Chemical mapping of a 177-nucleotide RNA with DMS and 2A3. The data come from the RNA Mapping Database (RMDB), library M2PK90. For DMS the reverse transcriptase was MarathonRT. The reactions ran in a buffer of 150 mM KOAc, 10 mM MgCl2 and 150 mM bicine (pH 8.5), at 24 C.

RNA sequence: GGGAACGACUCGAGUAGAGUCGAAAAUCUAAGAGCGUAACACACACUCAGACUGUACGACAGUCUGACACUCACAUACGCUAGUGUAUCGUGUGUGUGAUAUCGAUGUAGCACGAAAAUGAAAGAAAUGAUGCAAUACGUUCGCGUAUUGCAUCAUAAAAGAAACAACAACAACAAC
Reactivity to DMS in 0.01 (KOAc 150mM, MgCl2 10mM, bicine 150mM(pH8.5), 24C), signal-to-noise 5, nucleotides 027 to 126: u000c020u000a110a180g010a060g000c130g020u000a090a050c010a020c010a040c010a040c050u000c020a000g010a020c000u000g000u010a170c300g040a170c000a000g020u000c000u010g030a040c110a030c110u000c080a050c100a120u000a050c130g010c110u010a030g000u000g000u000a060u000c130g000u000g010u000g010u000g000u000g000a060u010a090u000c030g010a090u010g010u000a090g000c090a080c040g000a030a050a050a080u000g020a080a080a090g010a100a070
Reactivity to 2A3 in 0.01 (KOAc 150mM, MgCl2 10mM, bicine 150mM(pH8.5), 24C), signal-to-noise 5, nucleotides 027 to 126: u050c030u050a150a000g010a000g080c050g020u040a030a010c010a000c000a000c010a000c000u050c010a000g010a020c000u020g030u130a180c170g170a090c230a000g000u000c000u000g000a000c010a010c010u040c010a050c020a120u240a090c090g090c150u010a030g000u010g020u060a070u160c100g000u020g000u000g000u000g000u010g030a020u020a000u090c040g010a030u090g060u160a020g060c040a000c160g060a130a060a000a020u240g080a100a070a060g120a020a180
The DMS profile rests on 3,611 reads. 2A3 adducts were read by reverse transcription with SuperScript II with manganese.